This 177-nucleotide RNA was probed chemically with DMS and 2A3. For 2A3, 11,882 sequencing reads were counted. The DMS profile rests on 3,990 reads. High 2A3 reactivity points to a flexible backbone, as in loops and unpaired stretches. The reactions ran in a buffer of 150 mM KOAc, 10 mM MgCl2 and 150 mM bicine (pH 8.5), at 24 C.
RNA sequence: GGGAACGACUCGAGUAGAGUCGAAAAGAUAUGGAACGAAUCGUGGAACUACGCAUAAACAUCGGAAACGAUGUGAAUGCGCCACGACUAUUCCUAAGUCAAAUCCCGUACCUUCGGGUACGGGAAACUCUAGUCUAUGGUUCGCCAUAGACUAGAGAAAAGAAACAACAACAACAAC
Reactivity to DMS in 0.01 (KOAc 150mM, MgCl2 10mM, bicine 150mM(pH8.5), 24C), signal-to-noise 4, nucleotides 027 to 126: g020a030u010a300u020g000g020a000a010c100g020a030a130u000c010g020u000g000g000a090a050c110u020a300c000g010c000a010u000a050a300a020c000a010u000c000g010g020a080a100a220c010g000a000u010g000u010g010a120a030u000g010c010g040c010c000a010c000g030a010c030u000a300u000u000c010c000u010a070a150g010u000c020a070a120a160u000c010c000c000g020u000a000c000c010u010u020c180g020g010g020u000a000c000g000g010g000a000a000a030
Reactivity to 2A3 in 0.01 (KOAc 150mM, MgCl2 10mM, bicine 150mM(pH8.5), 24C), signal-to-noise 5, nucleotides 027 to 126: g030a010u100a030u160g000g010a060a040c080g060a260a300u010c020g000u020g000g010a150a060c180u300a030c300g010c000a000u020a010a060a000c000a000u010c010g020g020a050a060a040c010g010a000u000g000u000g010a020a030u010g000c010g020c000c000a000c000g000a000c000u030a050u030u000c010c000u020a140a020g040u020c040a020a010a250u040c000c000c000g000u010a010c010c000u030u110c300g180g000g000u000a000c000g000g000g000a020a000a000